[RMDB]
RNA sequence: GGGAACGACUCGAGUAGAGUCGAAAACGGUGCGUGCGGAAUUCCUACGUGUCAUCAGAGGCAGCCUGGUCUUACGGCAAUUCAUGGUAUCAGAAUGUAAGAGGGCAGCAUCCAUGGGUAGCGAGACACAUAAAACGGGGUUCGCCCCGUUUUAUGUAAAAGAAACAACAACAACAAC
Reactivity to DMS in 0.01 (KOAc 150mM, MgCl2 10mM, bicine 150mM(pH8.5), 24C), signal-to-noise 4, nucleotides 027 to 126: c080g000g010u010g020c050g020u000g000c050g010g000a080a130u000u000c040c020u010a070c140g010u010g020u010c060a060u010c090a050g010a110g000g000c020a080g020c020c000u000g010g010u000c010u000u000a040c080g010g010c110a100a050u010u010c020a080u000g000g000u000a090u010c130a120g010a050a060u000g010u000a040a050g010a120g000g000g010c030a060g030c030a050u010c020c050a040u010g010g000g020u000a060g020c080g010a070g000a090c110
Reactivity to 2A3 in 0.01 (KOAc 150mM, MgCl2 10mM, bicine 150mM(pH8.5), 24C), signal-to-noise 2, nucleotides 027 to 126: c050g060g050u060g000c010g040u070g030c020g040g030a010a100u110u090c020c000u040a030c030g040u060g040u110c030a070u020c020a010g040a050g120g000c010a000g040c020c040u100g050g050u020c030u020u060a020c030g050g030c080a050a010u060u060c020a050u090g090g000u150a100u140c030a040g080a180a040u150g050u050a070a020g010a040g040g020g000c000a000g020c000a020u000c010c000a040u030g050g000g010u010a020g040c010g040a030g010a040c050